[RMDB]
RNA sequence: GGGAACGACUCGAGUAGAGUCGAAAAGCGGACGGUAUCAGUGCACCGGUGCUGGCCUGGCUGCAUCCACCCGGAAUCGACUUCGGGCCCGCGCUGCUGGCCGACGUGCAGAUAGCGGUGUCCUCGACUCCCAGUCGGAUUUCGAUCCGACUGGGAGAAAAGAAACAACAACAACAAC
Reactivity to DMS in 0.01 (KOAc 150mM, MgCl2 10mM, bicine 150mM(pH8.5), 24C), signal-to-noise 1, nucleotides 027 to 126: g000c110g050g020a090c020g000g000u000a110u000c060a080g020u000g000c080a050c040c160g000g000u000g050c020u000g000g000c150c210u000g010g000c010u000g000c030a060u010c150c070a200c040c030c020g010g000a050a160u000c150g020a010c150u000u030c020g000g000g000c040c020c050g020c030g010c020u010g020c030u000g020g020c070c020g000a080c190g010u000g030c060a020g000a070u000a030g010c010g000g030u010g020u040c020c070u000c050g000a210
Reactivity to 2A3 in 0.01 (KOAc 150mM, MgCl2 10mM, bicine 150mM(pH8.5), 24C), signal-to-noise 1, nucleotides 027 to 126: g020c040g030g020a070c040g010g090u090a040u130c000a050g110u000g010c040a020c060c110g110g070u070g080c050u030g010g020c000c060u050g120g050c040u100g010c000a060u000c060c020a050c030c000c000g040g050a030a090u210c090g020a060c100u080u030c050g060g000g000c000c000c010g000c000g020c020u000g000c000u020g050g040c010c000g030a080c040g050u060g070c020a010g080a130u030a050g000c040g000g080u080g010u060c020c000u000c030g080a090